RNA sequence: GGGAACGACUCGAGUAGAGUCGAAAAGCUGUACACGCACAACCACUGGAUGGGCCACCCGGACUCCAUCGUGCAGGGCGCGAGGAAGAACUGCCCGCUGUACAUCCUGCCUCAUUGGGCGCAGUUCAAGCAGAAGGUCGCCGCGAAGCUCGCGGAGCCCGUAUAGGUAGUUCGCUACCUAUACGGGAAAAGAAACAACAACAACAAC
Reactivity to 2A3 in 0.01 (KOAc 150mM, MgCl2 10mM, bicine 150mM(pH8.5), 24C), signal-to-noise 3, nucleotides 027 to 156: g020c050u050g070u100a030c050a000c100g040c010a040c040a070a130c050c050a050c090u060g090g030a040u010g030g040g010c030c030a120c050c100c080g060g000a070c050u050c040c010a090u040c050g030u040g020c050a060g040g020g000c030g000c000g060a060g030g030a070a140g010a110a010c030u030g020c020c000c000g050c040u000g020u020a030c000a050u050c020c030u030g010c010c010u150c060a190u200u210g030g020g000c080g000c020a020g000u030u040c030a030a010g040c030a030g010a090a000g080g030u100c070g020c070c000g010c010g010a090a030g090c100u050c030g000c000g020g020a020g020
Reactivity to DMS in 0.01 (KOAc 150mM, MgCl2 10mM, bicine 150mM(pH8.5), 24C), signal-to-noise 1, nucleotides 027 to 156: g000c050u000g050u010a090c040a160c000g090c080a060c060a100a100c070c040a080c060u030g020g000a080u000g010g010g030c030c030a160c100c040c050g000g010a090c050u000c010c020a110u000c000g000u000g020c020a130g030g020g010c040g090c030g000a060g040g020a110a130g010a050a000c010u000g030c020c070c010g030c030u000g050u000a040c040a050u010c030c040u000g010c020c010u000c160a200u000u020g000g010g020c050g040c020a010g000u010u000c010a100a180g020c020a060g020a100a130g000g010u000c000g000c000c020g000c010g010a300a300g020c140u000c010g000c000g010g010a300g030

Overview: The record gives the reactivity of an RNA of 207 nucleotides to 2A3 and DMS. 2A3 is a SHAPE reagent: it acylates the 2'-hydroxyl of flexible nucleotides of all four kinds. Conditions: 150 mM KOAc, 10 mM MgCl2 and 150 mM bicine (pH 8.5), 24 C. 2A3 adducts were read by reverse transcription with SuperScript II with manganese.